This 207-nucleotide RNA was probed chemically with 2A3 and DMS. The DMS profile rests on 4,498 reads.
RNA sequence: GGGAACGACUCGAGUAGAGUCGAAAACAUCUUUCCUCCCUACACAGUGACUCCAGCUUGGGAGGGGCAGGGCUAGGCUGAGCCAGCACUCCCUGUGGUGUCUGCCUGCCUCGUGCAGCUCUGGAGUAAAACCUGGAGAAGUUCGCUUCUCCAGGAAUCUUUAAUUCAAGUUCGCUUGAAUUAAAGAAAAAGAAACAACAACAACAAC
Reactivity to 2A3 in 0.01 (KOAc 150mM, MgCl2 10mM, bicine 150mM(pH8.5), 24C), signal-to-noise 4, nucleotides 027 to 156: c030a080u080c060u100u110u060c020c000u020c020c000c000u110a090c160a010c040a150g110u040g070a010c000u000c000c000a010g020c020u050u060g010g000g000a000g000g000g000g010c020a020g000g030g010c050u300a000g000g000c000u020g030a010g120c060c010a030g030c010a040c040u090c010c030c020u040g020u040g020g020u050g140u010c020u050g010c000c000u010g000c020c020u090c060g150u130g010c010a040g010c010u000c010u060g020g000a000g000u010a010a040a000a010c000c000u000g000g000a000g000a000a000g010u030u120c150g020c090u000u010c000u000c000c000a000g000g000a000a000
Reactivity to DMS in 0.01 (KOAc 150mM, MgCl2 10mM, bicine 150mM(pH8.5), 24C), signal-to-noise 2, nucleotides 027 to 156: c050a070u000c090u000u000u010c050c020u000c000c000c010u000a160c160a220c200a120g010u010g000a110c010u000c010c010a070g000c090u000u000g000g010g000a130g020g020g020g020c050a050g000g020g000c000u010a040g020g010c040u000g010a300g000c040c010a080g000c040a040c040u000c050c030c030u010g060u010g000g030u000g020u000c020u000g010c010c000u010g020c000c010u000c070g000u010g000c000a110g020c060u000c020u000g050g000a080g010u010a080a050a080a150c000c000u000g020g010a010g000a040a040g000u000u000c290g010c010u000u000c000u000c000c000a010g000g010a000a010

2A3 adducts were read by reverse transcription with SuperScript II with manganese. The reactions ran in a buffer of 150 mM KOAc, 10 mM MgCl2 and 150 mM bicine (pH 8.5), at 24 C.